[RMDB]
Structure probing data (DMS and 2A3) for a 177-nucleotide construct. For 2A3, 1,912 sequencing reads were counted. The RNA was probed in 150 mM KOAc, 10 mM MgCl2 and 150 mM bicine (pH 8.5) at 24 C. For 2A3 the reverse transcriptase was SuperScript II with manganese.
RNA sequence: GGGAACGACUCGAGUAGAGUCGAAAAGUAAAAAGAUAACGGGAAUCCAAGAGCGCCCCAAAACUUACCCGGCUCGGUGGGGCACGCCCGUUAUAGGGCUGGAAAAAGAAAAGAAAAGAAAAAGAAAGAUAAAUACGAUAUUCGUAUCGUAUUUAUCAAAAGAAACAACAACAACAAC
Reactivity to DMS in 0.01 (KOAc 150mM, MgCl2 10mM, bicine 150mM(pH8.5), 24C), signal-to-noise 1, nucleotides 027 to 126: g010u000a120a070a190a040a130g000a000u040a000a030c030g000g030g000a140a150u000c080c020a150a140g010a120g000c240g020c000c000c000c000a080a030a160a140c030u000u060a070c130c000c000g000g000c020u000c010g010g010u020g000g000g030g000c000a060c040g000c010c000c000g030u000u000a030u020a060g000g000g010c000u010g010g000a080a080a060a050a090g010a080a050a060a160g000a120a060a070a060g000a000a070a000a080a070g000a090a070a150
Reactivity to 2A3 in 0.01 (KOAc 150mM, MgCl2 10mM, bicine 150mM(pH8.5), 24C), signal-to-noise 2, nucleotides 027 to 126: g040u080a030a050a050a050a080g120a040u050a020a010c020g000g010g020a090a070u110c050c030a150a030g070a040g070c140g000c010c000c010c010a090a180a010a020c020u040u030a050c000c010c020g010g010c010u000c030g070g020u030g000g000g000g000c020a010c050g030c000c000c000g010u020u000a000u030a010g010g010g000c010u010g030g000a100a030a010a040a020g130a060a060a030a000g110a040a080a030a020g050a030a090a050a020a030g100a030a040a000